This 177-nucleotide RNA was probed chemically with DMS.
The reactions ran in a buffer of 150 mM KOAc, 10 mM MgCl2 and 150 mM bicine (pH 8.5), at 24 C.
The data come from the RNA Mapping Database (RMDB), library M2PK50.
DMS adducts were read by reverse transcription with MarathonRT.

RNA sequence: GGGAACGACUCGAGUAGAGUCGAAAACUCUGCAUAUUCGUAUGCAGAGAAAUAACGGUCGGCACAUGCAGCUAGUCGAACAUGCUGCUCGACCUUUUGGUAAAAACCGGAGGUUCGCCUCCGGUAACUCAAUGAUGUCCUUCGGGACAUCAUUGAGAAAAGAAACAACAACAACAAC
Reactivity to DMS in 0.01 (KOAc 150mM, MgCl2 10mM, bicine 150mM(pH8.5), 24C), signal-to-noise 1, nucleotides 027 to 126: c000u000c000u000g010c000a000u000a000u000u020c150g030u000a000u000g020c000a000g010a010g020a000a100a070u020a050a090c170g030g000u010c000g020g010c050a020c010a030u000g000c020a300g010c040u010a110g000u010c040g010a120a230c010a030u000g000c140u010g010c010u010c010g020a000c000c000u010u010u000u020g000g010u000a100a050a060a110a010c010c010g020g020a020g010g010u010u000c220g010c000c000u000c000c000g030g000u000a010a020